Structure probing data (2A3 and DMS) for a 207-nucleotide construct. Values cover nucleotides 27 to 156. The RNA was probed in 150 mM KOAc, 10 mM MgCl2 and 150 mM bicine (pH 8.5) at 24 C. For DMS, 2,679 sequencing reads were counted. For DMS the reverse transcriptase was MarathonRT. It was measured as part of the RMDB library OK3TST.
[RMDB]
RNA sequence: GGGAACGACUCGAGUAGAGUCGAAAAGCGGGCAAACCGGUGCGCGUACCUCGAGACAGGUGUUACGCACGAAAGCCGACGAACUCACGCCACCGUUUCCGAUCUACGCCGCGAUGCUGUUGAUCAGUGCCGUCGUCGCGACCGCCGGACUGCUGGCAAAGUACCGAACUUUCGAGUUCGGUACUUUAAAAGAAACAACAACAACAAC
Reactivity to 2A3 in 0.01 (KOAc 150mM, MgCl2 10mM, bicine 150mM(pH8.5), 24C), signal-to-noise 2, nucleotides 027 to 156: g070c000g000g060g000c020a110a040a050c070c050g000g010u050g000c110g000c000g000u020a030c030c040u020c030g110a090g040a090c140a080g010g010u030g020u130u130a150c080g040c050a020c140g080a100a070a000g030c020c010g030a060c070g020a030a010c010u000c090a040c030g030c000c000a000c020c010g020u010u080u000c000c020g000a030u000c010u130a010c060g010c030c020g090c020g000a050u070g010c020u070g030u080u090g060a170u090c040a020g050u030g140c050c020g040u010c000g010u020c000g000c000g040a060c020c000g040c010c000g010g040a070c050u080g090c040u010g020g010c000
Reactivity to DMS in 0.01 (KOAc 150mM, MgCl2 10mM, bicine 150mM(pH8.5), 24C), signal-to-noise 1, nucleotides 027 to 156: g030c030g010g030g000c050a140a080a070c020c020g020g000u020g000c010g050c060g010u010a060c030c000u000c090g010a300g010a210c180a060g050g020u000g000u020u010a050c010g050c010a050c010g000a060a070a120g040c020c060g000a190c010g010a040a080c080u010c070a080c050g020c010c010a110c060c010g030u010u000u010c020c030g020a120u000c050u000a080c040g000c010c050g010c040g000a080u000g010c000u000g040u000u020g000a130u010c020a070g000u000g000c010c020g050u000c030g030u000c050g010c050g000a090c010c030g000c070c030g030g000a060c050u000g010c020u000g010g050c100